About this RNA
Chemical mapping of a 177-nucleotide RNA with 2A3 and DMS. For DMS the reverse transcriptase was MarathonRT. The RNA was probed in 150 mM KOAc, 10 mM MgCl2 and 150 mM bicine (pH 8.5) at 24 C. Values cover nucleotides 27 to 126. For DMS, 2,346 sequencing reads were counted. The 2A3 profile rests on 3,578 reads.
[RMDB]
RNA sequence: GGGAACGACUCGAGUAGAGUCGAAAAGAUAUGGACGUAUCAUUCGGCCAUCGAUCAUGCCUCGGAAACGAGGCAUGGGAGGCUGGAAUGAGUACGUCCUAAGUCAAAAGAUCACUUCGGUGAUCAACUGUUGAAAAGACUUCGGUCUUUUCAACAGAAAAGAAACAACAACAACAAC
Reactivity to 2A3 in 0.01 (KOAc 150mM, MgCl2 10mM, bicine 150mM(pH8.5), 24C), signal-to-noise 2, nucleotides 027 to 126: g050a010u100a060u150g020g000a010c000g020u010a020u070c000a030u000u020c010g020g010c000c040a250u300c090g040a070u090c000a000u000g030c000c010u000c000g040g020a080a080a030c000g030a000g000g000c000a000u010g000g000g030a010g000g000c040u270g300g100a030a040u010g020a030g030u020a010c000g020u000c000c000u000a010a010g010u000c010a090a100a050a090g000a000u020c000a000c020u070u110c300g120g010u000g000a020u020c000a000a030
Reactivity to DMS in 0.01 (KOAc 150mM, MgCl2 10mM, bicine 150mM(pH8.5), 24C), signal-to-noise 3, nucleotides 027 to 126: g010a050u010a300u000g010g000a000c000g010u000a020u000c010a020u000u000c010g000g000c000c000a300u010c200g000a050u010c000a000u000g000c010c000u000c000g030g000a120a130a270c010g000a010g020g010c000a000u000g000g010g030a030g010g020c000u000g010g040a020a000u000g000a030g020u000a000c000g020u000c000c010u000a010a120g010u000c050a100a100a150a140g000a010u000c000a000c000u000u020c190g040g020u010g010a010u000c010a040a160